Structure probing data (DMS and 2A3) for a 207-nucleotide construct.
RNA sequence: GGGAACGACUCGAGUAGAGUCGAAAAACUAAGCUUUCGAGCUUAGUAAAAAAGCGUACUACCACAUGCAUUUGGCGUUGAAAGGUUUCCCAAAUAGGAAACCUGGAGCCAUGUUCCCAUGUGGUAUCGCAAAAAGCGUGGGUUUCGACCCACGCAACAUUAUUUAAGUAUUCGUACUUAAAUAAUGAAAAGAAACAACAACAACAAC
Reactivity to DMS in 0.01 (KOAc 150mM, MgCl2 10mM, bicine 150mM(pH8.5), 24C), signal-to-noise 3, nucleotides 027 to 156: a060c000u000a010a040g010c000u000u000u000c250g020a030g020c000u000u000a010g010u010a010a060a070a110a060a120g010c020g000u000a080c130u000a020c010c000a000c020a030u000g020c050a180u010u000u010g020g010c000g040u000u000g010a150a160a110g000g020u000u000u000c010c000c000a050a150a250u010a040g000g000a000a020a010c000c000u000g000g000a250g020c000c000a030u010g010u000u000c130c070c010a040u010g010u000g000g010u000a010u000c020g000c010a030a050a070a130a080g000c000g030u010g000g010g010u000u000u000c140g000a120c010c000c000a000c010g010c000a010a030
Reactivity to 2A3 in 0.01 (KOAc 150mM, MgCl2 10mM, bicine 150mM(pH8.5), 24C), signal-to-noise 3, nucleotides 027 to 156: a000c010u020a020a000g010c010u050u100u250c300g040a000g000c000u010u000a000g000u030a050a120a010a000a000a000g030c040g020u100a120c050u000a000c010c000a010c000a000u000g040c020a080u030u020u080g010g010c000g200u190u020g010a030a020a000g000g010u000u000u020c010c010c020a230a290a080u300a090g000g000a000a000a000c000c000u000g000g020a010g000c000c010a000u020g020u050u060c010c040c000a000u000g010u020g000g010u010a020u220c020g000c010a110a070a000a040a000g000c000g000u000g010g010g020u050u080u180c240g060a070c000c000c000a000c000g000c000a000a000

It was measured as part of the RMDB library RNAMAK.
Values cover nucleotides 27 to 156.
The RNA was probed in 150 mM KOAc, 10 mM MgCl2 and 150 mM bicine (pH 8.5) at 24 C.
The 2A3 profile rests on 4,175 reads.
The DMS profile rests on 8,606 reads.
2A3 adducts were read by reverse transcription with SuperScript II with manganese.